Structure probing data (2A3) for a 177-nucleotide construct. Source: RMDB library OK1LIB, as collected in RNAgym. Reactivities are given for positions 27 through 126. Values are in units of 0.01, from 0 to 300, in steps of 10. Conditions: 150 mM KOAc, 10 mM MgCl2 and 150 mM bicine (pH 8.5), 24 C.
RNA sequence: GGGAACGACUCGAGUAGAGUCGAAAAAUCAUUCUGGUCACUUGGUCUGGAGAAAUACCAGUCAACAUGGUGGUGAAGUCACCGUAGUUGAAAACGGCUUCAGCAACUUCGACUGGGUAGGUUUAAACAUCCAGCGGGUGUUCGCACCCGCUGGAUGAAAAGAAACAACAACAACAAC
Reactivity to 2A3 in 0.01 (KOAc 150mM, MgCl2 10mM, bicine 150mM(pH8.5), 24C), signal-to-noise 2, nucleotides 027 to 126: a000u300c080a030u070u140c000u090g050g000u000c030a020c050u010u000g170g020u110c030u030g050g000a020g030a020a150a000u190a000c000c000a030g020u000c000a000a000c060a030u070g000g080u030g000g040u110g100a110a040g020u120c090a000c020c020g100u100a210g000u010u150g010a070a080a010a020c000g020g000c030u000u000c000a030g010c000a000a080c010u100u100c120g000a020c000u000g150g000g000u000a090g140g000u080u040u010a080a210a020